[RMDB]
RNA sequence: GGGAACGACUCGAGUAGAGUCGAAAAUCCAGUACGUUCGCGUACUGGAAAACUCGCGGCUUGAGGGCGUGUACGGCAGCGCACACACACGACCCUCAAGCCAAAGUCCGUACUUCGGUACGGACAAGUAGUCACAUUAGUUCGCUAAUGUGACUACAAAAGAAACAACAACAACAAC
Reactivity to DMS in 0.01 (KOAc 150mM, MgCl2 10mM, bicine 150mM(pH8.5), 24C), signal-to-noise 5, nucleotides 027 to 126: u000c000c000a000g000u000a000c000g010u000u010c220g030c010g020u000a000c000u000g000g000a010a030a060a120c030u000c030g020c180g000g010c000u000u000g000a020g000g000g010c000g010u000g010u000a080c120g000g020c090a100g010c150g030c080a090c070a100c090a040c030a040c010g010a130c000c000c010u010c000a000a000g000c000c000a010a030a080g000u000c000c000g010u000a000c000u000u010c150g010g010u000a000c000g000g000a000c000a000a060
Reactivity to 2A3 in 0.01 (KOAc 150mM, MgCl2 10mM, bicine 150mM(pH8.5), 24C), signal-to-noise 8, nucleotides 027 to 126: u000c000c000a000g000u000a000c010g010u020u050c250g000c010g130u010a000c000u000g000g020a010a000a000a010c010u010c020g050c080g000g000c000u000u000g000a010g000g010g000c000g010u020g010u030a040c050g070g030c070a160g110c110g040c110a030c010a000c000a000c010a010c190g300a300c030c000c000u000c010a000a000g000c000c000a000a000a000g000u000c000c000g000u000a000c000u020u040c190g070g010u000a000c000g010g000a000c000a000a010

The data come from the RNA Mapping Database (RMDB), library M2PK50. This 177-nucleotide RNA was probed chemically with DMS and 2A3. Conditions: 150 mM KOAc, 10 mM MgCl2 and 150 mM bicine (pH 8.5), 24 C. For 2A3 the reverse transcriptase was SuperScript II with manganese. DMS adducts were read by reverse transcription with MarathonRT.